[RMDB]
RNA sequence: GGGAACGACUCGAGUAGAGUCGAAAAAGGGUUUUCACCCUUCCUUUAGUGUCCUUCCUCUCCUGGAGAGGUCUUCUGCCCUAGCCCGGUCUUCGAAGCUUCCUUUGGCUACUACCCGGUGGAAACAUCAACUAUAUGGGUUCGCCCAUAUAGUUGAAAAAGAAACAACAACAACAAC
Reactivity to DMS in 0.01 (KOAc 150mM, MgCl2 10mM, bicine 150mM(pH8.5), 24C), signal-to-noise 3, nucleotides 027 to 126: a030g000g010g000u000u010u000u000c180a090c000c010c040u000u010c030c020u000u010u010a100g020u000g000u000c030c030u000u020c020c010u000c030u010c030c070u000g010g010a090g010a070g010g010u010c030u000u000c070u000g010c030c030c040u010a110g010c040c060c080g010g010u000c050u000u000c090g000a090a160g000c080u000u000c040c040u010u000u000g010g000c030u010a080c060u000a100c040c020c010g000g030u000g000g000a090a060a080c140a150
Reactivity to 2A3 in 0.01 (KOAc 150mM, MgCl2 10mM, bicine 150mM(pH8.5), 24C), signal-to-noise 2, nucleotides 027 to 126: a000g100g010g000u050u090u180u270c090a070c010c000c000u000u060c010c000u060u050u090a110g040u050g030u060c000c020u030u090c010c010u020c010u000c020c080u060g020g070a050g020a030g060g010u000c020u060u020c020u050g050c000c000c000u030a040g020c010c000c000g070g020u020c050u070u050c060g050a040a020g000c010u070u050c020c000u060u040u100g070g030c020u080a080c030u050a040c050c010c010g060g010u040g040g030a070a060a000c030a070
Notes
Structure probing data (DMS and 2A3) for a 177-nucleotide construct. High DMS reactivity at an A or C suggests that its Watson-Crick edge is free. For 2A3, 2,245 sequencing reads were counted. It was measured as part of the RMDB library VIROID. For 2A3 the reverse transcriptase was SuperScript II with manganese. For DMS the reverse transcriptase was MarathonRT. The RNA was probed in 150 mM KOAc, 10 mM MgCl2 and 150 mM bicine (pH 8.5) at 24 C.